[RMDB]
RNA sequence: GGGAACGACUCGAGUAGAGUCGAAAAGAAGUCCACGCACACCGCAGUGGGUCUAUGGUGUAAUAUACACGGCGAAGGCCGCCGAGGGGACCGCGCCAGCGAAGCGGUCAACGCUGGCCGUGGGAAAGGGUAGAUUAUUCUUCGGAAUAAUCUACCCAAAAGAAACAACAACAACAAC
Reactivity to DMS in 0.01 (KOAc 150mM, MgCl2 10mM, bicine 150mM(pH8.5), 24C), signal-to-noise 4, nucleotides 027 to 126: g000a130a120g000u000c010c000a040c060g000c050a100c050a100c060c030g000c060a130g010u010g000g010g020u010c050u000a060u040g010g000u010g000u010a080a080u050a100u040a090c050a060c030g000g020c030g010a120a170g010g030c030c010g030c040c020g010a090g000g010g030g010a080c020c030g010c040g000c030c010a030g000c020g000a110a140g020c060g000g000u010c040a040a080c000g000c030u020g010g010c020c030g060u000g010g000g000a070a120a140
Reactivity to 2A3 in 0.01 (KOAc 150mM, MgCl2 10mM, bicine 150mM(pH8.5), 24C), signal-to-noise 4, nucleotides 027 to 126: g130a040a000g080u030c000c010a040c000g070c020a070c010a030c040c050g090c050a060g030u090g010g010g040u020c020u040a130u200g100g000u060g020u030a070a140u110a030u030a090c040a010c060g000g030c050g040a100a030g070g020c020c000g000c010c000g020a040g000g000g020g010a010c000c030g000c010g000c020c000a020g000c020g010a060a010g030c000g000g000u020c010a030a010c010g000c000u010g000g000c040c030g020u040g000g000g030a070a110a090
The data come from the RNA Mapping Database (RMDB), library OK1LIB. The record gives the reactivity of an RNA of 177 nucleotides to DMS and 2A3. The 2A3 profile rests on 5,051 reads. The reactions ran in a buffer of 150 mM KOAc, 10 mM MgCl2 and 150 mM bicine (pH 8.5), at 24 C. Values cover nucleotides 27 to 126. For 2A3 the reverse transcriptase was SuperScript II with manganese. For DMS the reverse transcriptase was MarathonRT.